[RMDB]
Chemical mapping of a 177-nucleotide RNA with DMS and 2A3. The RNA was probed in 150 mM KOAc, 10 mM MgCl2 and 150 mM bicine (pH 8.5) at 24 C. 2A3 adducts were read by reverse transcription with SuperScript II with manganese.

RNA sequence: GGGAACGACUCGAGUAGAGUCGAAAACCGCUGGCGUUCCGGCGGCGUCGAAGAAUGUCAUGGCGAUUUUAAAUAACCCGGCGGCAGCGGGUCCUAACACGAUCCCCACCAACACUGUGCUGCACGACAGUGGAUGCAUCUUCGGAUGCAUCCACUGAAAAGAAACAACAACAACAAC
Reactivity to DMS in 0.01 (KOAc 150mM, MgCl2 10mM, bicine 150mM(pH8.5), 24C), signal-to-noise 2, nucleotides 027 to 126: c010c020g000c000u000g010g010c060g000u000u010c010c000g030g050c160g000g000c040g020u000c020g000a130a080g000a080a080u020g000u000c110a130u010g000g000c060g000a060u000u020u000u000a040a070a160u050a170a170c190c000c000g000g030c000g020g000c020a030g000c010g000g010g000u000c010c000u010a050a090c210a110c170g010a050u000c010c020c000c020a120c080c030a040a120c070a040c090u000g010u000g010c010u010g000c040a070c100g020a140
Reactivity to 2A3 in 0.01 (KOAc 150mM, MgCl2 10mM, bicine 150mM(pH8.5), 24C), signal-to-noise 1, nucleotides 027 to 126: c000c000g000c000u010g000g130c030g080u170u100c030c030g030g000c010g000g050c010g000u020c010g060a210a130g130a220a110u220g040u300c050a080u150g030g010c030g030a080u150u050u000u290a160a170a150u070a020a030c000c000c000g030g000c040g030g000c000a000g000c000g010g000g000u000c000c000u020a100a000c040a000c080g030a060u080c040c050c000c010a060c000c000a060a000c070a010c040u040g030u050g000c060u030g000c030a020c050g060a000